[RMDB]
RNA sequence: GGGAACGACUCGAGUAGAGUCGAAAACGGAAGCAUUAAAACCAUUCGAGCUAGUCAAUGCGUGGCGUGUCUCUCCGCAGCGUGUUGGCGAAUGUAAAGAGUGACUAAGCAUGUCGUACCGAGGAUGAUAAGAGCAAUUCGUUCGCGAAUUGCUCAACACGUACGCAAACUUCGGUUUGCGUACGUGAAAAGAAACAACAACAACAAC
Reactivity to 2A3 in 0.01 (KOAc 150mM, MgCl2 10mM, bicine 150mM(pH8.5), 24C), signal-to-noise 1, nucleotides 027 to 156: c000g030g000a020a020g000c130a130u040u040a040a020a000a040c010c000a030u070u100c020g000a010g070c050u100a040g030u000c000a030a000u000g000c000g000u050g060g000c000g000u090g070u070c000u000c000u000c150c000g010c000a000g000c000g000u000g010u000u000g010g000c000g000a010a030u090g020u080a000a140a000g000a030g000u000g000a000c000u120a100a000g040c070a120u110g030u110c020g040u060a040c020c010g010a070g100g000a010u120g030a000u060a160a210g000a000g000c000a000a000u000u000c000g020u000u090c160g010c000g140a000a000u000u000g000c000u000c000a000a000